Notes
Chemical mapping of a 207-nucleotide RNA with 2A3 and DMS. Values cover nucleotides 27 to 156. 2A3 adducts were read by reverse transcription with SuperScript II with manganese. Source: RMDB library OK3TST, as collected in RNAgym.
RNA sequence: GGGAACGACUCGAGUAGAGUCGAAAAGAGAGCCACGUCGUUGGUGGGUGUUCCCAUGUUGCAGGUACCGUCCUGGUACUUAGUAUCUGUUAACACACAAAUUCACGAGGAAUGCUCCCAAAGCACAGAGAGGUUAAAUUACUCAGUCUAAGGUCAAAAUAAAUGCAUCGUUCGCGAUGCAUUUAUUAAAAGAAACAACAACAACAAC
Reactivity to 2A3 in 0.01 (KOAc 150mM, MgCl2 10mM, bicine 150mM(pH8.5), 24C), signal-to-noise 3, nucleotides 027 to 156: g110a000g010a010g040c010c000a030c030g130u060c060g120u190u030g050g000u090g030g050g040u040g000u000u000c000c010c000a010u090g010u030u030g000c000a010g020g000u010a010c010c020g090u100c070c110u140g040g030u050a030c000u050u030a030g000u000a030u020c010u010g020u080u190a040a020c070a000c030a010c070a030a170a060u210u140c100a030c070g020a060g030g000a040a040u070g020c010u080c030c020c040a050a100a040g040c080a040c020a000g030a000g000a010g030g000u030u090a030a090a040u110u080a050c020u030c050a020g090u000c080u130a080a140g090g040u140c120a080a190
Reactivity to DMS in 0.01 (KOAc 150mM, MgCl2 10mM, bicine 150mM(pH8.5), 24C), signal-to-noise 2, nucleotides 027 to 156: g000a160g000a140g040c020c010a120c080g030u010c060g020u010u000g020g040u010g000g030g060u000g010u010u000c020c000c030a220u000g040u010u010g000c000a030g010g010u010a040c000c090g010u020c110c060u030g000g030u030a020c020u000u030a020g000u000a030u000c030u000g010u000u010a040a040c060a070c080a150c090a070a070a140u000u000c070a130c060g010a130g000g010a060a040u010g000c010u000c010c040c020a070a080a060g040c040a070c050a080g010a080g010a050g020g010u000u010a050a070a090u000u000a030c030u000c030a130g010u000c060u000a110a120g020g000u010c050a080a090